[RMDB]
RNA sequence: GGGAACGACUCGAGUAGAGUCGAAAAGCGUGGAUACACACACCGCGGUCAGCUCGAACGCCGGGUUGGUCACCAGCUCGCUCAGGGCCAGCCGCCCGACGUUUCCGGUUCCGACGUGAGCAACCCGGGCAUCAGGGGAGUUCGCUCCCCUGAUGCCAAAAGAAACAACAACAACAAC
Reactivity to 2A3 in 0.01 (KOAc 150mM, MgCl2 10mM, bicine 150mM(pH8.5), 24C), signal-to-noise 3, nucleotides 027 to 126: g060c070g010u020g010g060a110u170a230c060a020c020a000c000a010c040c060g020c010g000g050u070c090a040g040c060u050c040g030a080a030c000g010c050c000g060g000g000u090u270g010g040u040c020a030c090c030a000g000c040u020c010g080c050u160c150a170g040g010g000c000c000a000g000c000c030g000c010c010c050g050a040c030g000u040u080u050c000c010g000g000u030u070c020c000g020a090c020g100u070g020a050g010c010a000a090c020c020c000g050
Reactivity to DMS in 0.01 (KOAc 150mM, MgCl2 10mM, bicine 150mM(pH8.5), 24C), signal-to-noise 1, nucleotides 027 to 126: g060c080g080u010g000g030a080u000a040c110a120c050a060c060a090c110c070g000c050g000g000u060c060a160g100c020u010c240g000a050a000c030g000c040c000g000g000g000u000u040g010g000u030c070a040c140c210a040g000c000u000c060g000c110u040c100a170g000g000g000c070c080a300g000c100c090g100c000c000c000g000a050c030g000u000u000u000c050c110g040g000u000u000c070c000g000a210c080g020u010g010a030g040c000a090a080c000c000c000g010